[RMDB]
RNA sequence: GGGAACGACUCGAGUAGAGUCGAAAACCCAGUUCUGGGGCCGUUCACUGGAUCCGAAGCCUCUAGAAGGAUAAUAUAGGCACUCCAUACCCUACUCCGACUCAAUACGUCCCCGUCGUACAGAAUGCAAGGGCAUCCCUGUUCGCAGGGAUGCCAACCUCUUGUACUUGUUCGCAAGUACAAGAGGAAAAGAAACAACAACAACAAC
Reactivity to 2A3 in 0.01 (KOAc 150mM, MgCl2 10mM, bicine 150mM(pH8.5), 24C), signal-to-noise 1, nucleotides 027 to 156: c000c030c000a010g060u070u020c000u040g000g000g000g010c030c010g040u100u120c040a040c050u090g050g010a040u120c010c020g060a120a000g040c060c040u040c040u080a190g040a210a020g160g000a030u040a180a050u080a020u040a120g050g030c010a000c120u030c010c000a020u080a130c000c010c010u030a070c010u010c000c030g040a010c000u000c050a030a210u090a060c010g000u000c030c010c030c030g040u020c020g000u010a080c020a080g070a180a070u010g060c040a000a050g110g000g020c000a000u000c000c000c000u000g040u080u040c150g000c090a000g000g000g100a010u000g000c000c010a010a000